[RMDB]
RNA sequence: GGGAACGACUCGAGUAGAGUCGAAAAGAUAUGGAACUGUGAACUACGCUCACAGUUUCCUAUAAUCACGAUAAGUCGGAAACGACUUAUCGUGGUAGGAAACGGUGAGCGCACAGUUCCUAAGUCACUUACCUAAAAGCUUCGGCUUUUAGGUAAGAAAAGAAACAACAACAACAAC
Reactivity to 2A3 in 0.01 (KOAc 150mM, MgCl2 10mM, bicine 150mM(pH8.5), 24C), signal-to-noise 3, nucleotides 027 to 126: g020a000u080a040u240g000g010a000a010c000u000g040u000g040a120a090c130u300a070c300g010c010u020c000a020c000a000g000u010u010u010c000c000u000a000u140a050a210u250c000a000c010g000a010u010a000a010g030u010c010g020g080a100a090a140c010g010a000c010u000u000a010u000c000g000u000g010g000u000a030g000g020a010a000a000c010g060g000u000g000a000g000c000g010c000a000c000a010g000u000u000c000c000u000a010a000g020u000c010a020
Reactivity to DMS in 0.01 (KOAc 150mM, MgCl2 10mM, bicine 150mM(pH8.5), 24C), signal-to-noise 4, nucleotides 027 to 126: g010a010u010a300u000g000g000a010a020c000u000g000u000g010a120a080c180u030a300c020g000c000u000c000a000c010a040g010u000u000u000c000c010u000a090u000a300a110u010c010a010c000g020a010u000a010a000g020u000c010g010g000a100a100a160c000g010a040c000u010u000a010u000c000g030u010g000g000u020a020g000g010a000a010a010c000g000g030u000g010a020g000c000g000c010a000c010a000g000u000u000c000c000u000a020a070g000u000c050a260

Overview:
This 177-nucleotide RNA was probed chemically with 2A3 and DMS. Source: RMDB library TTRINS, as collected in RNAgym. 2A3 adducts were read by reverse transcription with SuperScript II with manganese. The DMS profile rests on 4,526 reads.